[RMDB]
RNA sequence: GGGAACGACUCGAGUAGAGUCGAAAAGCAACGUCUUUCGGAUUGUCUGUCAGCUGACGACCACCUGUGACUUCAUUUUCGCUCUGUUGUUUACCCUGACGCCCCAGAAUCCAGGAGACAACAAAGAUGGGUACAGAGUAUUCGUACUCUGUACCCAAAAAGAAACAACAACAACAAC
Reactivity to DMS in 0.01 (KOAc 150mM, MgCl2 10mM, bicine 150mM(pH8.5), 24C), signal-to-noise 2, nucleotides 027 to 126: g000c080a110a110c210g020u010c010u000u020u010c050g010g000a130u000u000g020u020c050u000g000u000c050a150g010c050u000g000a060c040g010a040c040c080a110c060c040u010g030u000g000a070c030u010u000c160a100u000u000u010u000c150g010c040u000c030u000g000u000u000g000u000u000u000a160c110c040c030u020g020a120c070g010c030c010c030c050a130g010a100a070u000c030c010a030g000g000a010g010a030c020a030a080c070a030a120a070g000a110